Structure probing data (2A3) for a 207-nucleotide construct. It was measured as part of the RMDB library OK3TST.

RNA sequence: GGGAACGACUCGAGUAGAGUCGAAAAGCUUCCAUUGGCAGUAAUUAUGGAGCCACAAGCUUGACGUGAACUAAAGAGCUUACAUGGAGAGGUCAGGGUAGGAAGCAUAUUAUCAUGGUGCUUUUUAUGUUAACUUAUAUCCAGUGAAGAACAAGUGUAGUUCGGUAAGGUUCGCCUUACCGAACUAAAAAGAAACAACAACAACAAC
Reactivity to 2A3 in 0.01 (KOAc 150mM, MgCl2 10mM, bicine 150mM(pH8.5), 24C), signal-to-noise 1, nucleotides 027 to 156: g010c050u060u020c030c010a110u060u000g030g080c160a070g010u220a180a030u220u250a070u040g000g070a010g040c000c000a020c000a020a090g000c060u020u000g020a020c050g090u070g010a000a040c000u000a040a040a030g190a070g050c000u080u060a100c080a070u140g040g000a060g000a020g020g000u100c000a080g000g040g000u010a020g000g010a000a000g040c040a040u120a070u120u040a100u080c120a070u210g060g020u070g000c000u120u100u000u000u080a050u080g050u000u000a040a070c050u130u000a000u000a000u300c000c010a040g120u070g120a080a090g050a060a090c100a140a000g000u000g000

Conditions: 150 mM KOAc, 10 mM MgCl2 and 150 mM bicine (pH 8.5), 24 C.